[RMDB]
RNA sequence: GGGAACGACUCGAGUAGAGUCGAAAAUGCUCAAUGAGGUCUGGCAAUCAUGCUUUUGAGAGUUCUAAAUCGAUCAGUGAAGCGAAUGUUAAUGGUAAUCUGAACGAAAAGAUGUGUACAUUAUAGAACAAGAGAAAUAGUGAACUCAAUUAGAGUAAGUCUUUCAUCAGUUCGCUGAUGAAAGACUAAAAGAAACAACAACAACAAC
Reactivity to DMS in 0.01 (KOAc 150mM, MgCl2 10mM, bicine 150mM(pH8.5), 24C), signal-to-noise 2, nucleotides 027 to 156: u000g000c000u000c030a080a220u000g020a110g010g020u000c040u000g020g000c040a060a120u000c040a170u020g040c130u010u000u010u020g000a270g000a230g000u000u020c000u030a030a180a040u000c020g000a200u020c020a120g010u010g010a130a120g020c000g000a070a070u000g020u020u000a020a050u000g000g020u010a080a050u000c020u010g000a050a210c160g000a070a090a160a080g010a040u000g000u000g050u000a050c000a050u000u000a070u000a130g000a060a030c000a060a100g020a120g030a060a030a040u000a090g020u010g000a070a040c020u010c020a050a150u000u000a080g010a060g000u000a130
Reactivity to 2A3 in 0.01 (KOAc 150mM, MgCl2 10mM, bicine 150mM(pH8.5), 24C), signal-to-noise 4, nucleotides 027 to 156: u070g010c020u010c080a030a100u060g010a020g010g050u010c010u020g040g020c000a000a080u070c020a060u090g060c020u100u060u080u080g120a090g000a010g010u050u030c050u070a040a090a110u050c050g040a020u070c020a030g010u020g090a060a010g040c040g050a100a080u100g000u100u160a090a070u090g010g000u050a050a060u000c010u040g040a070a050c040g040a040a070a050a030g050a050u060g060u010g020u060a000c000a030u040u050a020u030a090g030a040a000c010a040a030g050a000g000a070a050a010u080a010g070u070g050a020a010c000u000c010a030a090u080u030a030g010a000g010u030a070